[RMDB]
RNA sequence: GGGAACGACUCGAGUAGAGUCGAAAAGGUCAGGAGUUAGACCGUAGCGAUAGGAGGAGAUGCUAGGAGUAGGAGGAGACCGAAGCGAGGAGGAAAGCAAAGAAAGCAACGGGGCUAGCCGUCAGGUGUCCUUAUAACUGUUCGCAGUUAUAAGGACAAAAGAAACAACAACAACAAC
Reactivity to 2A3 in 0.01 (KOAc 150mM, MgCl2 10mM, bicine 150mM(pH8.5), 24C), signal-to-noise 2, nucleotides 027 to 126: g050g020u070c020a010g000g100a100g110u060u070a040g030a040c020c020g020u010a040g020c050g040a060u110a120g000g040a010g050g020a040g010a030u090g050c020u040a020g030g020a040g030u060a020g010g040a020g020g020a030g030a030c020c030g020a020a000g050c060g020a040g020g010a010g000g050a070a030a000g060c040a080a040a080g050a040a120a010g000c030a030a020c040g020g000g030g000c030u020a030g040c020c020g030u030c020a010g080g040u040
Reactivity to DMS in 0.01 (KOAc 150mM, MgCl2 10mM, bicine 150mM(pH8.5), 24C), signal-to-noise 2, nucleotides 027 to 126: g000g010u000c040a110g010g030a140g010u020u010a100g010a080c030c020g020u000a080g000c050g000a060u000a080g030g010a060g010g030a100g000a060u000g020c110u000a070g000g000a040g040u000a070g000g010a090g030g000a170g010a080c010c040g000a110a110g020c120g000a090g010g000a030g030g000a060a070a080g000c120a020a060a110g000a080a110a090g020c070a040a050c110g000g000g000g020c130u000a070g010c010c040g010u020c100a070g010g000u000